[RMDB]
Chemical mapping of a 207-nucleotide RNA with 2A3 and DMS. For DMS the reverse transcriptase was MarathonRT. Reactivities are given for positions 27 through 156.
RNA sequence: GGGAACGACUCGAGUAGAGUCGAAAAUGCUAAUUCGUUAGCAAUUCAGUCCUAAGUCGAGUGAGGCGUGUGGGAGCUACGUGUCGGAAACGACACUAUAGCGAAGAACACACGCUCCCCACCACUCGAUAUGGAAUAUACUGGUCUUCGGACCAAAAAGACUCUAAGGUUUCGACCUUAGAGUCUUAAAAGAAACAACAACAACAAC
Reactivity to 2A3 in 0.01 (KOAc 150mM, MgCl2 10mM, bicine 150mM(pH8.5), 24C), signal-to-noise 3, nucleotides 027 to 156: u080g020c010u010a040a040u130u080c200g110u130u000a000g000c030a010a080u150u120c060a050g130u000c030c010u070a210a050g010u000c000g000a010g000u000g000a000g000g000c020g000u000g000u010g010g010g020a040g020c000u010a010c030g000u000g000u000c010g020g040a050a060a110c010g010a000c010a000c000u010a020u050a140g000c000g060a160a000g020a050a000c010a000c010a000c000g020c000u020c000c000c000c010a010c010c000a000c000u000c000g000a000u000a020u070g020g030a030a000u200a010u050a170c120u070g010g000u000c000u020u050c290g140g000a030c000c000a080a050a000
Reactivity to DMS in 0.01 (KOAc 150mM, MgCl2 10mM, bicine 150mM(pH8.5), 24C), signal-to-noise 1, nucleotides 027 to 156: u000g040c010u000a050a100u000u010c300g020u000u010a000g080c040a130a150u020u010c140a130g010u020c000c010u040a020a300g000u000c020g000a050g000u000g010a300g000g050c010g000u030g040u000g040g000g000a300g010c000u000a000c260g020u000g010u020c000g040g000a110a110a260c000g000a050c000a020c050u000a050u010a030g000c000g000a130a230g050a120a170c020a020c000a000c010g000c000u000c160c060c050c030a300c220c010a070c000u000c010g000a020u000a290u000g000g000a100a080u000a100u000a120c140u000g020g020u000c000u000u010c230g060g000a060c000c000a010a020a110